Record summary: The record gives the reactivity of an RNA of 207 nucleotides to 2A3. Conditions: 150 mM KOAc, 10 mM MgCl2 and 150 mM bicine (pH 8.5), 24 C. Source: RMDB library ARCHII, as collected in RNAgym.

[RMDB]
RNA sequence: GGGAACGACUCGAGUAGAGUCGAAAACAAGAGAGAAGGUGUAGAGACUGGAAGGCAGGCAUCCUAACGUUAAGCCGAGGAUGAAGGGACAGUCCAGACCACAAACUGGUUAACUAAAAGCUAGUUAAUUCAGGCAGUGAAAGCUGUAGAUGAUGGUACCCGAGUUAUAGUUCGCUAUAACUCGGGUAAAAGAAACAACAACAACAAC
Reactivity to 2A3 in 0.01 (KOAc 150mM, MgCl2 10mM, bicine 150mM(pH8.5), 24C), signal-to-noise 2, nucleotides 027 to 156: c060a050a030g030a000g010a020g000a090a010g000g010u050g000u130a080g030a010g020a040c010u020g010g000a060a020g020g000c020a010g070g000c000a020u040c010c010u020a020a020c010g010u040u070a040a030g110c150c010g000a000g000g010a020u030g050a020a050g060g000g020a010c000a010g010u000c000c010a030g020a040c000c040a030c020a040a250a020c020u000g000g000u000u010a000a000c000u030a030a050a000a300g150c070u010a010g010u030u030a020a000u120u300c010a010g070g000c030a000g000u030g050a070a080a040g010c000u010g010u020a010g010a080u130g000a020u020g060g030u000